RNA sequence: GGGAACGACUCGAGUAGAGUCGAAAAAAAGCAUGUGUAACUGUGUCAUAGAAUGAUUACAUCCAGGCAUUAUUGCCAGCCAAGAUUGAUAAAUAUGCCCAAUAAGUAUAAUUGUUCUCUGUGUUAGUAUUCAAGACGGUUUCGACCGUCUUGAAUAAAAAGAAACAACAACAACAAC
Reactivity to DMS in 0.01 (KOAc 150mM, MgCl2 10mM, bicine 150mM(pH8.5), 24C), signal-to-noise 2, nucleotides 027 to 126: a050a090a060g000c040a040u000g010u010g000u000a050a060c070u010g030u000g020u000c060a060u000a060g000a030a120u010g000a070u010u010a070c080a060u010c060c130a090g000g010c040a040u000u020a150u020u010g000c040c020a060g000c060c080a070a040g000a120u000u020g000a020u000a030a070a100u000a020u000g000c000c000c020a100a090u000a050a130g010u010a020u000a040a070u000u010g000u010u000c040u000c040u010g020u010g030u000u000a100g010